[RMDB]
RNA sequence: GGGAACGACUCGAGUAGAGUCGAAAACAUGGAGUGUUCGCACUCCAUGAAAAUGCGCACGGCAGCGCAAGACGGGCCGACGUGAAUAAAUGCCGUAAUAAAAAAUCUAUCUGUUCGCAGAUAGAAACAUCCAAUAAUACUUCGGUAUUAUUGGAUGAAAAGAAACAACAACAACAAC
Reactivity to 2A3 in 0.01 (KOAc 150mM, MgCl2 10mM, bicine 150mM(pH8.5), 24C), signal-to-noise 7, nucleotides 027 to 126: c000a000u000g000g000a010g010u010g010u070u160c180g070c060a000c000u000c000c000a000u000g000a000a000a000a020u120g000c000g000c010a030c040g020g000c010a020g000c010g000c020a000a010g090a010c020g020g090g080c060c040g120a260c030g040u050g070a100a050u130a140a060a020u030g000c000c010g020u030a030a130u150a050a160a010a010a000a030u020c000u010a000u000c000u010g060u040u060c230g020c070a000g010a010u000a000g010a010a010a000
Reactivity to DMS in 0.01 (KOAc 150mM, MgCl2 10mM, bicine 150mM(pH8.5), 24C), signal-to-noise 6, nucleotides 027 to 126: c000a000u000g000g010a010g030u000g020u000u020c240g020c010a010c000u000c000c000a000u000g000a020a060a080a090u010g010c020g010c020a080c010g010g000c010a030g000c010g020c020a080a130g010a060c040g000g000g010c050c050g020a180c020g010u000g010a070a050u000a030a050a060u000g000c010c010g010u010a140a090u040a010a030a070a080a100a080u000c000u000a000u000c000u000g010u010u010c180g020c000a010g000a010u000a000g000a020a060a130